[RMDB]
RNA sequence: GGGAACGACUCGAGUAGAGUCGAAAAACGGGCACGUUCGCGUGCCCGUAAUGAACGCUGCAACGCGCAGAGAUCUCGCGAGAGCGCGAAUGCACAAAGUAACAUUUCCAGUUUUCGAACUGGAAAACUUCAUGCAGAAAUUCGUUUCUGCAUGAAGAAAAGAAACAACAACAACAAC
Reactivity to 2A3 in 0.01 (KOAc 150mM, MgCl2 10mM, bicine 150mM(pH8.5), 24C), signal-to-noise 1, nucleotides 027 to 126: a010c020g000g010g010c020a010c010g030u070u070c220g020c010g060u010g020c010c010c010g020u010a000a000u020g000a060a030c070g030c110u020g010c010a010a050c000g000c000g000c030a000g040a020g020a180u070c050u070c110g030c090g040a060g010a030g080c010g000c000g040a080a040u070g010c010a020c010a050a100a020g100u130a110a020c010a080u010u020u010c000c000a000g010u000u000u060u040c140g040a020a000c010u000g000g000a000a020a000a000
Reactivity to DMS in 0.01 (KOAc 150mM, MgCl2 10mM, bicine 150mM(pH8.5), 24C), signal-to-noise 4, nucleotides 027 to 126: a050c000g040g020g030c000a020c010g020u010u000c250g030c060g060u010g010c000c000c000g000u000a000a030u000g000a130a110c180g010c200u000g000c020a060a220c040g000c010g010c040a090g020a180g000a100u010c050u000c110g010c130g010a130g000a120g010c010g000c000g000a070a090u020g010c030a040c120a070a060a100g000u000a070a080c300a110u000u000u000c000c000a010g000u000u000u000u010c200g000a020a020c000u000g000g010a000a000a030a070

The record gives the reactivity of an RNA of 177 nucleotides to 2A3 and DMS. DMS adducts were read by reverse transcription with MarathonRT. High DMS reactivity at an A or C suggests that its Watson-Crick edge is free. 2A3 adducts were read by reverse transcription with SuperScript II with manganese. The data come from the RNA Mapping Database (RMDB), library M2PK50.